[RMDB]
The record gives the reactivity of an RNA of 177 nucleotides to DMS and 2A3. For DMS the reverse transcriptase was MarathonRT. It was measured as part of the RMDB library M2PK50. Reactivities are given for positions 27 through 126.
RNA sequence: GGGAACGACUCGAGUAGAGUCGAAAAUCACUGGACUUCGGUCCAGUGAAAAAGAAAGUCGGACGGCGAACGUCAAACGCUGACGUACGAAAGUACGAAAAAAAAGUACGCCCUUCGGGGCGUACAACAAUUUCUAAUUGUUCGCAAUUAGAAAUUGAAAAGAAACAACAACAACAAC
Reactivity to DMS in 0.01 (KOAc 150mM, MgCl2 10mM, bicine 150mM(pH8.5), 24C), signal-to-noise 3, nucleotides 027 to 126: u000c010a010c000u000g000g010a010c000u000u030c170g040g010u000c000c000a010g000u000g000a000a010a060a110a090g000a100a080a090g010u000c020g010g010a060c070g040g000c050g000a050a050c030g010u010c110a030a090a160c120g010c070u010g000a190c000g010u000a020c000g010a100a100a140g010u000a000c000g010a010a000a010a050a030a070a110a100g020u000a000c000g020c000c000c000u000u010c170g010g030g000g020c000g010u000a010c010a030a090
Reactivity to 2A3 in 0.01 (KOAc 150mM, MgCl2 10mM, bicine 150mM(pH8.5), 24C), signal-to-noise 2, nucleotides 027 to 126: u010c000a000c010u000g010g000a000c000u030u030c270g060g010u010c010c000a010g010u000g000a000a000a000a000a010g060a010a040a010g130u070c020g010g040a050c010g030g080c040g050a100a050c040g070u060c060a090a090a060c060g020c060u040g040a030c000g000u000a000c020g030a100a000a040g010u010a010c020g090a120a010a010a000a000a000a000a010g010u000a000c000g010c010c010c000u000u040c140g020g020g010g000c010g010u000a000c000a000a000